Structure probing data (DMS and 2A3) for a 207-nucleotide construct.
Conditions: 150 mM KOAc, 10 mM MgCl2 and 150 mM bicine (pH 8.5), 24 C.
The data come from the RNA Mapping Database (RMDB), library RNAMAK.
The 2A3 profile rests on 2,936 reads.
For 2A3 the reverse transcriptase was SuperScript II with manganese.
For DMS the reverse transcriptase was MarathonRT.
RNA sequence: GGGAACGACUCGAGUAGAGUCGAAAACGCUGGGCUCCUCGGGCCGACUCAUAGACAUGCUCCGUACUGAAGCGCGCACGGUACAGGAGCAACAGCUAUGAGUCGGUCUCUAGCGUGGGAGCCUGUGCUGAAGCGCGCACGGCAACCGAAAGGUGCGGAAUAUAACUCACUUCGGUGAGUUAUAUUCAAAAGAAACAACAACAACAAC
Reactivity to DMS in 0.01 (KOAc 150mM, MgCl2 10mM, bicine 150mM(pH8.5), 24C), signal-to-noise 1, nucleotides 027 to 156: c060g000c060u000g000g000g000c000u000c010c000u000c040g020g000g020c000c000g000a020c010u000c010a050u000a060g000a140c100a150u010g030c000u000c000c010g040u000a040c000u010g000a040a090g000c000g000c000g010c030a300c020g020g020u000a020c000a130g110g010a080g030c020a020a020c130a150g010c000u000a010u010g000a050g010u000c010g000g020u000c000u010c040u000a120g050c110g000u000g000g000g000a030g030c000c010u000g010u000g020c050u000g050a180a070g030c030g050c010g030c000a120c010g000g040c040a130a210c030c020g000a050a110a220g010g020u000g000c000g020
Reactivity to 2A3 in 0.01 (KOAc 150mM, MgCl2 10mM, bicine 150mM(pH8.5), 24C), signal-to-noise 3, nucleotides 027 to 156: c050g000c040u080g000g000g000c000u000c000c000u030c050g030g000g010c000c000g010a000c000u000c000a000u010a110g110a190c090a140u180g000c000u000c000c000g020u000a000c000u030g070a280a090g040c060g000c020g010c050a000c030g000g000u040a030c060a300g020g000a000g030c010a010a010c010a010g030c000u000a000u000g000a000g000u000c010g000g010u000c000u000c010u020a020g020c000g050u220g010g000g000a000g020c000c000u010g020u040g000c000u080g030a080a010g030c010g000c020g000c010a010c030g060g010c050a120a070c040c020g100a100a030a030g080g000u010g000c000g000